[RMDB]
RNA sequence: GGGAACGACUCGAGUAGAGUCGAAAAUGAAUUAUCCGCUGCUUGGAGGAAUUUCGCGAGCUCUUGCCCACAAUGGUGCUGCACUCGGCGGAUCGUUUUCGAGCGGCUGCUGCACCACACGCUGUGAGUUUUAGUCCAUAUUCGUAUGGACUAAAACAAAAGAAACAACAACAACAAC
Reactivity to DMS in 0.01 (KOAc 150mM, MgCl2 10mM, bicine 150mM(pH8.5), 24C), signal-to-noise 6, nucleotides 027 to 126: u010g010a110a070u010u000a100u000c020c020g010c060u000g010c110u000u000g000g010a120g000g000a090a080u000u000u010c060g020c090g000a080g020c060u000c050u000u010g010c010c020c020a100c180a080a100u010g010g020u000g000c020u010g010c050a040c040u000c020g010g010c020g000g010a020u000c250g000u010u000u010u000c040g010a080g020c010g020g010c150u000g000c040u000g000c020a020c010c020a080c110a060c130g010c070u010g010u000g000a190
Reactivity to 2A3 in 0.01 (KOAc 150mM, MgCl2 10mM, bicine 150mM(pH8.5), 24C), signal-to-noise 3, nucleotides 027 to 126: u080g030a020a080u140u070a040u120c030c010g020c040u050g010c020u020u080g060g020a030g020g090a140a130u090u170u150c070g010c040g060a010g040c020u010c030u090u110g050c010c010c000a060c040a020a100u130g030g000u040g010c030u030g000c000a000c010u020c010g060g000c010g010g050a040u040c060g070u060u040u070u120c040g040a130g040c030g020g010c030u010g010c000u010g000c000a000c000c000a010c000a010c020g120c050u090g050u060g190a120

The data come from the RNA Mapping Database (RMDB), library OK2TRN. An RNA of 177 nucleotides, treated with DMS and 2A3 and read out base by base. For 2A3 the reverse transcriptase was SuperScript II with manganese. The reactions ran in a buffer of 150 mM KOAc, 10 mM MgCl2 and 150 mM bicine (pH 8.5), at 24 C. For 2A3, 6,405 sequencing reads were counted.